RNA sequence: GGGAACGACUCGAGUAGAGUCGAAAAUGCAAAUACAGAUGAAGCUUUGCUGGCUAGCCUGCCACUCACCUCCUGCUGUGCGGCCCGGUUUCUAACAGGCCAUCAACUGGAACCGGUCUGUGGCCAGGAGACAAUACGCAUUCGUGCGUAUUGUCUCAAAAGAAACAACAACAACAAC
Reactivity to DMS in 0.01 (KOAc 150mM, MgCl2 10mM, bicine 150mM(pH8.5), 24C), signal-to-noise 2, nucleotides 027 to 126: u000g010c050a030a080a120u010a130c090a100g010a070u010g000a130a110g010c110u000u000u000g030c090u000g010g010c100u000a080g010c050c040u000g000c030c020a070c050u000c130a110c000c020u010c020c010u000g020c050u010g040u000g020c060g000g000c020c010c100g000g000u000u000u010c060u020a090a140c110a100g000g010c010c010a030u000c080a080a100c100u000g020g000a060a060c070c070g000g000u000c010u000g030u000g010g040c080c040a050g000
Reactivity to 2A3 in 0.01 (KOAc 150mM, MgCl2 10mM, bicine 150mM(pH8.5), 24C), signal-to-noise 2, nucleotides 027 to 126: u090g020c020a010a120a010u130a120c030a030g200a130u100g060a120a030g050c020u060u110u100g030c010u030g010g010c010u000a090g090c000c010u010g000c020c020a040c010u030c000a080c010c020u030c000c010u030g020c030u070g040u050g080c000g010g040c000c000c000g000g020u050u030u000c020u030a060a050c010a070g000g000c050c010a050u100c030a030a040c020u090g010g080a060a060c060c010g010g000u000c020u030g040u010g020g000c000c000a040g000